RNA sequence: GGGAACGACUCGAGUAGAGUCGAAAACGAUGCCGUUACUAAAAAGCGAUAAAAGUGUGGAUCACUCCGAUCGACAUCAUAGAUUAGCGCUUCACCGUCAAGCCGUUCUAAUUUAGUGGCAUCACUCACUGAAUAGUGUGUUCGCACACUAUUCAGUAAAAGAAACAACAACAACAAC
Reactivity to DMS in 0.01 (KOAc 150mM, MgCl2 10mM, bicine 150mM(pH8.5), 24C), signal-to-noise 8, nucleotides 027 to 126: c250g020a020u000g010c000c010g010u010u020a170c030u000a010a020a040a090a060g010c040g000a080u010a030a050a110a140g020u000g010u000g010g020a030u000c010a140c190u010c260c190g000a010u000c010g010a030c030a010u000c090a120u000a070g000a120u000u000a040g010c070g030c010u000u000c120a110c150c120g010u000c150a080a060g010c080c020g010u010u000c020u010a060a120u000u000u000a020g020u000g000g020c020a010u000c010a130c080u010c060
Reactivity to 2A3 in 0.01 (KOAc 150mM, MgCl2 10mM, bicine 150mM(pH8.5), 24C), signal-to-noise 9, nucleotides 027 to 126: c050g010a010u010g000c000c000g090u190u090a030c030u060a010a010a060a060a010g080c050g050a060u090a120a130a030a030g020u020g020u050g130g030a030u040c020a020c180u100c100c090g010a010u010c020g080a030c010a030u130c020a020u060a070g090a110u070u140a040g010c040g020c060u040u050c090a200c140c040g150u190c040a030a030g010c030c010g030u060u000c030u040a070a160u050u030u030a030g000u080g010g000c000a000u000c000a010c010u030c010